[RMDB]
RNA sequence: GGGAACGACUCGAGUAGAGUCGAAAACGGUCCCGGAGCCGGAGGUAUCGCCGCUCGUAGCCGUCCUGGCCCUCCCGGACCUCGACCGUCGGGCUGACGCUGUCCGGGUCGGCGGACUCGUAGCCGACCUGCGAUCCACGUUCGCGUGGAUCGCAGGAAAAGAAACAACAACAACAAC
Reactivity to 2A3 in 0.01 (KOAc 150mM, MgCl2 10mM, bicine 150mM(pH8.5), 24C), signal-to-noise 1, nucleotides 027 to 126: c020g010g070u030c000c040c050g020g000a080g020c070c050g090g010a040g010g110u130a100u300c050g050c080c050g050c090u050c100g090u070a010g020c040c040g100u040c010c020u050g040g000c000c030c000u090c050c020c000g030g000a030c000c040u020c050g080a080c020c000g060u060c110g050g100g000c070u100g030a030c020g000c090u030g020u030c000c000g010g010g040u010c010g020g000c080g010g010a020c010u010c080g020u080a000g000c030c010g050a050
Reactivity to DMS in 0.01 (KOAc 150mM, MgCl2 10mM, bicine 150mM(pH8.5), 24C), signal-to-noise 1, nucleotides 027 to 126: c090g040g070u000c010c000c070g020g030a050g010c030c010g000g020a170g000g000u000a080u010c080g000c030c000g030c080u010c030g020u000a170g000c090c050g010u010c010c070u020g000g000c040c040c050u000c080c050c060g000g000a130c020c050u010c170g000a060c060c010g000u000c100g010g020g020c030u010g000a030c020g040c160u000g000u010c030c030g000g010g010u000c050g000g000c030g000g000a040c040u000c100g000u000a070g000c020c020g020a250